[RMDB]
RNA sequence: GGGAACGACUCGAGUAGAGUCGAAAAGAUUACGUGUCGUUGUGGAAUCGAUACUACGCACGAGAUUCCAAGGUCUCUGUAGUACGUCCGCUGGUGACGUCUUUGGAGUCACGUUCGAGAUACGAAAGGUUACUACUAGGUUCGCCUAGUAGUAACCAAAAGAAACAACAACAACAAC
Reactivity to DMS in 0.01 (KOAc 150mM, MgCl2 10mM, bicine 150mM(pH8.5), 24C), signal-to-noise 3, nucleotides 027 to 126: g000a150u050u010a060c130g000u020g000u010c010g010u000u000g010u000g000g000a120a040u000c010g010a100u010a040c000u010a080c000g000c080a080c100g000a050g000a000u000u010c050c040a070a030g000g000u010c020u000c050u040g000u030a020g010u030a020c010g000u010c000c010g030c140u040g030g020u030g000a010c010g000u010c010u000u000u000g000g000a040g010u000c000a020c010g000u000u010c010g000a060g000a050u030a040c010g010a020a120a110
Reactivity to 2A3 in 0.01 (KOAc 150mM, MgCl2 10mM, bicine 150mM(pH8.5), 24C), signal-to-noise 5, nucleotides 027 to 126: g110a050u170u200a050c070g000u000g030u030c030g010u010u020g010u020g040g040a030a010u080c010g010a020u010a100c000u010a030c010g010c010a010c040g010a030g000a010u050u000c040c020a020a030g060g020u030c020u000c070u200g170u070a050g080u040a040c010g010u010c010c000g080c170u140g080g100u180g010a000c000g050u010c010u010u030u080g030g000a010g000u000c010a010c030g000u020u050c030g010a020g000a020u050a040c010g020a300a090a080